[RMDB]
RNA sequence: GGGAACGACUCGAGUAGAGUCGAAAAGAUAUGGACAAGAACUACGCUGAAAUUAGCGUUGAAAAAGUUCCUAAAUCGGAAACGAUUUAGGAACUUUGGAGCUAUGAGUAAGCGCUUGUCCUAAGUCCAUAUAGCUACGGUUCGCCGUAGCUAUAUGAAAAGAAACAACAACAACAAC
Reactivity to DMS in 0.01 (KOAc 150mM, MgCl2 10mM, bicine 150mM(pH8.5), 24C), signal-to-noise 5, nucleotides 027 to 126: g010a090u000a300u000g000g000a010c010a030a020g010a140a100c150u010a300c040g010c000u010g000a160a170a250u000u000a000g010c000g010u000u010g000a100a100a010a010a010g000u000u000c000c000u000a000a000a010u010c000g030g000a090a070a200c000g010a020u000u000u000a010g010g000a000a000c000u010u000u000g000g000a110g020c000u000a010u000g000a080g000u000a070a040g000c000g010c010u000u010g010u000c000c000u000a020a080g000u000c030
Reactivity to 2A3 in 0.01 (KOAc 150mM, MgCl2 10mM, bicine 150mM(pH8.5), 24C), signal-to-noise 2, nucleotides 027 to 126: g030a000u120a080u210g010g020a010c020a020a000g020a130a180c200u230a090c300g010c020u020g000a000a080a030u010u000a000g020c050g090u100u040g000a010a020a000a000a000g010u010u000c010c000u000a000a010a010u010c000g030g060a080a060a040c010g000a000u040u000u000a000g020g000a020a000c010u000u000u000g000g010a010g000c010u000a010u030g000a010g030u010a010a010g000c000g010c020u000u000g000u030c000c000u000a080a020g020u030c020
Chemical mapping of a 177-nucleotide RNA with DMS and 2A3. The RNA was probed in 150 mM KOAc, 10 mM MgCl2 and 150 mM bicine (pH 8.5) at 24 C. For 2A3 the reverse transcriptase was SuperScript II with manganese. The data come from the RNA Mapping Database (RMDB), library TTRINS. The DMS profile rests on 6,623 reads.